RNA sequence: GGGAACGACUCGAGUAGAGUCGAAAAGAACUUGAAUGCAACAUUCAUUACAGUGGCAAAGAAAGGAAAUGUUGCCUUCAUAAGCCAAAGUGGAGCGUUGGGCGCGGGAAUAGUCUACAAGACAAUAUCCUGCUCAUAGAUUCGUCUAUGAGCAGGAAAAAGAAACAACAACAACAAC
Reactivity to DMS in 0.01 (KOAc 150mM, MgCl2 10mM, bicine 150mM(pH8.5), 24C), signal-to-noise 2, nucleotides 027 to 126: g010a070a090c130u000u020g020a030a030u000g030c030a010a000c010a000u010u000c040a090u010u000a150c090a080g030u000g020g000c100a050a090a090g000a050a060a110g000g000a030a030a020u000g010u000u000g000c000c040u020u000c020a040u010a030a070g010c030c030a060a100a090g030u010g020g000a060g020c060g030u000u010g000g020g040c150g000c030g010g010g020a080a030u020a110g020u000c010u000a070c140a100a130g000a070c060a100a090u000a170